[RMDB]
This 207-nucleotide RNA was probed chemically with DMS and 2A3. For 2A3 the reverse transcriptase was SuperScript II with manganese. Conditions: 150 mM KOAc, 10 mM MgCl2 and 150 mM bicine (pH 8.5), 24 C. For DMS the reverse transcriptase was MarathonRT. Source: RMDB library OK3TST, as collected in RNAgym.

RNA sequence: GGGAACGACUCGAGUAGAGUCGAAAAGUCUUUUGUCAUCAACCGUCAGCUAUGGUUCCGUAUAACCUGUACAUUACAUCCGUUUACACAGAAAGAAAAGACAGCCAGAAAUAUGCAACGAACCACUGGUUGUUUAGGGCGGCAUAGAACCAAUAUGAAUGGAACGAGAUUUCGAUCUCGUUCCAUUAAAAGAAACAACAACAACAAC
Reactivity to DMS in 0.01 (KOAc 150mM, MgCl2 10mM, bicine 150mM(pH8.5), 24C), signal-to-noise 1, nucleotides 027 to 156: g020u000c010u000u000u010u020g010u000c030a130u000c060a100a080c010c000g000u000c060a120g030c030u010a060u010g010g000u000u000c010c060g040u000a030u000a030a080c030c010u000g010u000a090c110a110u000u030a090c020a090u000c040c020g000u010u000u000a110c070a050c050a020g000a030a020a180g000a070a110a080a120g010a040c040a020g030c040c040a070g010a040a150a140u010a030u010g040c100a070a120c100g000a100a050c060c050a130c020u000g020g010u000u000g000u000u000u010a060g000g020g000c000g020g000c050a140u020a090g000a070a120c010c020a050a080u000a120u000g000
Reactivity to 2A3 in 0.01 (KOAc 150mM, MgCl2 10mM, bicine 150mM(pH8.5), 24C), signal-to-noise 1, nucleotides 027 to 156: g000u030c050u040u090u160u120g060u030c050a110u060c010a020a080c000c030g020u040c070a000g030c030u100a040u120g000g000u030u000c040c060g140u080a070u080a150a150c000c060u040g080u120a000c040a130u190u000a040c000a100u030c020c010g010u000u100u120a070c100a000c000a010g120a070a090a000g090a010a090a000a000g040a000c000a000g010c020c000a000g110a090a110a010u270a100u140g020c010a040a020c150g090a010a000c000c020a000c080u000g020g020u020u000g000u000u020u020a000g000g050g020c010g060g000c000a040u040a110g060a060a020c000c020a050a060u120a050u150g100